[RMDB]
RNA sequence: GGGAACGACUCGAGUAGAGUCGAAAACGUACCACUCCUUGUUCAUGCACAACAUGUGCAUCCGACCCACGCCCGAAGAGCUGGAGGAUUUUGGUACUCCGGACUUCACAAUAUACAAUGCCGGGCAUGACAGUCUACCGUUCGCGGUAGACUGUCAAAAAGAAACAACAACAACAAC
Reactivity to 2A3 in 0.01 (KOAc 150mM, MgCl2 10mM, bicine 150mM(pH8.5), 24C), signal-to-noise 1, nucleotides 027 to 126: c020g070u020a010c000c030a020c060u090c000c060u090u130g010u070u080c020a020u000g010c000a000c010a150a270c050a300u170g000u000g030c020a000u010c000c040g080a060c020c000c020a020c080g000c010c000c010g050a110a040g030a000g070c010u020g000g000a000g040g020a040u050u200u130u170g090g020u030a040c010u020c020c000g050g080a100c030u040u090c030a000c020a070a100u170a000u070a080c090a120a020u050g080c010c040g010g010g010c000a000
Reactivity to DMS in 0.01 (KOAc 150mM, MgCl2 10mM, bicine 150mM(pH8.5), 24C), signal-to-noise 1, nucleotides 027 to 126: c150g040u000a140c040c000a070c130u010c030c090u000u000g000u010u000c150a110u000g000c000a000c060a130a110c240a130u000g010u010g040c000a040u000c130c040g000a140c010c160c010a170c170g000c040c060c000g030a070a150g010a120g000c000u010g000g000a030g030g040a100u000u070u030u010g010g030u000a150c000u000c030c000g050g010a050c010u000u000c140a100c140a070a070u060a070u000a070c280a110a020u010g000c060c020g020g000g010c120a100
This 177-nucleotide RNA was probed chemically with 2A3 and DMS.
For DMS the reverse transcriptase was MarathonRT.
The data come from the RNA Mapping Database (RMDB), library OK2TST.
In probing experiments dimethyl sulfate is read out at A N1 and C N3, which are open when not base-paired.
Values cover nucleotides 27 to 126.